[RMDB]
RNA sequence: GGGAACGACUCGAGUAGAGUCGAAAAGUUAAGAAUCCUGAUGGUUCUACCAAAGAGUUAACUCCUGAAGAGGUAUCAGCGCAAAUCUUGAGCUACCUCAAGGACUAUGCGGAAAAGAAGAUUGGUAAGUAAGGAGCAAAUUCGUUUGCUCCUUACUAAAAGAAACAACAACAACAAC
Reactivity to DMS in 0.01 (KOAc 150mM, MgCl2 10mM, bicine 150mM(pH8.5), 24C), signal-to-noise 4, nucleotides 027 to 126: g020u000u020a100a100g000a110a130u000c030c030u010g010a130u010g020g010u000u010c030u000a070c040c060a030a090a100g010a100g010u000u000a090a150c150u000c020c020u000g010a090a160g010a050g000g010u000a060u000c070a070g000c020g030c030a050a080a100u010c120u010u000g020a040g010c110u000a060c120c000u000c010a040a030g010g000a020c070u010a070u000g010c060g000g000a040a080a080a110g000a080a080g010a120u020u010g000g000u000a070
Reactivity to 2A3 in 0.01 (KOAc 150mM, MgCl2 10mM, bicine 150mM(pH8.5), 24C), signal-to-noise 2, nucleotides 027 to 126: g060u090u110a150a010g050a100a080u070c020c000u060g080a090u170g050g030u030u040c010u010a060c000c020a000a130a020g100a030g000u050u050a040a040c030u060c000c010u100g080a200a070g010a040g040g040u050a070u120c070a020g080c010g020c010a030a140a130u070c070u090u080g020a000g030c000u040a060c010c000u000c000a000a000g020g020a020c010u040a040u140g050c070g050g080a020a070a030a070g080a080a000g040a180u000u160g060g030u040a000
An RNA of 177 nucleotides, treated with DMS and 2A3 and read out base by base. As a SHAPE reagent, 2A3 marks flexible, mostly unpaired nucleotides at the ribose 2'-OH. Values cover nucleotides 27 to 126.